[RMDB]
RNA sequence: GGGAACGACUCGAGUAGAGUCGAAAAGAUAUGGAUGCACCAGGACAUGCUUAGUCGGAAACGACAGGAGCAACAGCCUGUGUGCAUCCUAAGUCAAAACCACAUCCUGGUUCGCCAGGAUGUGGAAGUCCUAUGUCAGGUUCGCCUGACAUAGGACAAAAGAAACAACAACAACAAC
Reactivity to DMS in 0.01 (KOAc 150mM, MgCl2 10mM, bicine 150mM(pH8.5), 24C), signal-to-noise 2, nucleotides 027 to 126: g010a060u010a270u000g000g000a010u000g000c010a020c000c010a020g010g080a090c130a180u000g000c000u000u000a110g030u010c000g000g000a120a130a140c000g010a010c000a070g020g010a010g030c010a030a130c290a110g000c050c010u010g010u010g030u000g000c000a000u000c000c000u000a010a030g000u010c020a100a090a120a080c000c000a000c000a010u000c010c000u000g000g000u000u000c290g000c030c000a000g000g020a000u000g000u000g000g000a020a050
Reactivity to 2A3 in 0.01 (KOAc 150mM, MgCl2 10mM, bicine 150mM(pH8.5), 24C), signal-to-noise 1, nucleotides 027 to 126: g020a000u050a010u110g000g000a000u000g000c000a000c010c000a010g000g040a090c070a170u050g000c000u010u030a020g020u010c010g000g030a030a040a030c000g000a010c030a010g300g200a010g030c010a040a060c060a090g120c000c000u080g040u100g000u000g060c000a000u000c000c000u000a000a000g010u000c020a000a010a050a140c010c000a000c010a010u000c000c000u000g000g050u010u030c130g080c100c010a000g000g000a000u000g000u000g000g000a000a000